The data come from the RNA Mapping Database (RMDB), library M2RFPK. An RNA of 207 nucleotides, treated with DMS and 2A3 and read out base by base. For 2A3 the reverse transcriptase was SuperScript II with manganese. For 2A3, 3,433 sequencing reads were counted. Reactivities are given for positions 27 through 156.
RNA sequence: GGGAACGACUCGAGUAGAGUCGAAAAGGUGCUCUGAAUGGAGUGCUCUACUGAGAUUAUAAAAUAGAAGGUAAGCUAUUAUCUCUUACAACAGGGCAGGGCUUGUUGUAAUAGGCGGUAAAGUCUAAAAACUACCUCACCUUCGGGUGAGGUAGAAGUACGUAAAUGAGUUCGCUCAUUUACGUACAAAAGAAACAACAACAACAAC
Reactivity to DMS in 0.01 (KOAc 150mM, MgCl2 10mM, bicine 150mM(pH8.5), 24C), signal-to-noise 2, nucleotides 027 to 156: g030g010u000g010c050u000c000u010g010a140a190u000g060g000a000g050u000g010c030u000c050u000a090c100u000g020a090g010a110u010u000a200u000a080a130a140a080u000a060g030a190a170g010g000u010a060a060g020c080u010a060u000u000a060u020c020u010c060u010u000a030c010a000a130c010a050g000g020g030c010a140g000g010g030c030u000u000g020u000u010g000u000a030a100u000a050g040g000c030g000g000u000a080a100a080g000u000c010u000a020a020a080a120a110c030u000a000c020c000u020c010a030c000c000u010u000c300g070g040g000u000g050a000g000g010u000a000g000a010a030
Reactivity to 2A3 in 0.01 (KOAc 150mM, MgCl2 10mM, bicine 150mM(pH8.5), 24C), signal-to-noise 4, nucleotides 027 to 156: g070g030u020g000c000u010c010u030g150a120a090u200g010g010a020g010u030g010c010u040c040u040a060c050u070g010a000g030a110u120u120a080u260a150a100a110a030u130a030g050a100a030g080g030u080a020a020g030c010u010a040u120u050a070u090c010u020c010u020u040a030c010a060a010c000a030g010g020g020c020a020g040g060g000c010u010u020g000u000u000g000u000a010a060u030a040g000g010c020g000g070u110a120a040a030g010u010c030u070a050a030a030a030a010c000u000a000c010c000u000c000a010c000c000u020u050c130g020g000g000u000g000a000g000g000u000a000g000a000a000